[RMDB]
RNA sequence: GGGAACGACUCGAGUAGAGUCGAAAAAGUGUCGUAGCAAAAAUUCUUACUGCUGGCAGUGCCGAGAGGGUAGAGGGAGCGGCGGGAUAGAGCCGCGCCUGGGUGGUAGCAGCGAUGACUUAACGGCAUCACUGGGAAAUUUCGAUUUCCCAGUGAUAAAAGAAACAACAACAACAAC
Reactivity to DMS in 0.01 (KOAc 150mM, MgCl2 10mM, bicine 150mM(pH8.5), 24C), signal-to-noise 5, nucleotides 027 to 126: a080g010u000g000u000c030g020u010a070g020c070a020a050a090a090a090u030u010c030u000u010a120c080u000g010c030u000g010g010c060a080g010u010g000c060c030g010a100g010a120g000g010g010u000a070g010a140g000g000g000a100g010c020g000g010c040g010g040g010a250u030a080g020a090g000c000c010g020c020g000c030c020u000g010g010g010u010g000g010u010a060g000c020a070g000c080g000a050u020g000a090c050u010u020a080a090c050g000g000c110
Reactivity to 2A3 in 0.01 (KOAc 150mM, MgCl2 10mM, bicine 150mM(pH8.5), 24C), signal-to-noise 5, nucleotides 027 to 126: a000g090u040g010u030c040g030u060a010g060c070a020a040a020a070a160u130u050c020u050u070a090c020u030g060c000u000g040g010c030a040g050u020g110c030c030g080a050g030a040g060g050g030u110a050g040a070g070g010g000a080g020c010g000g000c020g030g040g020a070u160a160g090a030g030c000c000g010c000g000c010c010u040g010g010g020u050g030g060u030a020g030c020a000g000c000g070a070u080g010a020c000u020u030a060a020c020g030g000c010

The data come from the RNA Mapping Database (RMDB), libraries RFM100 and RFMREP. The record gives the reactivity of an RNA of 177 nucleotides to DMS and 2A3. 2A3 adducts were read by reverse transcription with SuperScript II with manganese. The reactions ran in a buffer of 150 mM KOAc, 10 mM MgCl2 and 150 mM bicine (pH 8.5), at 24 C.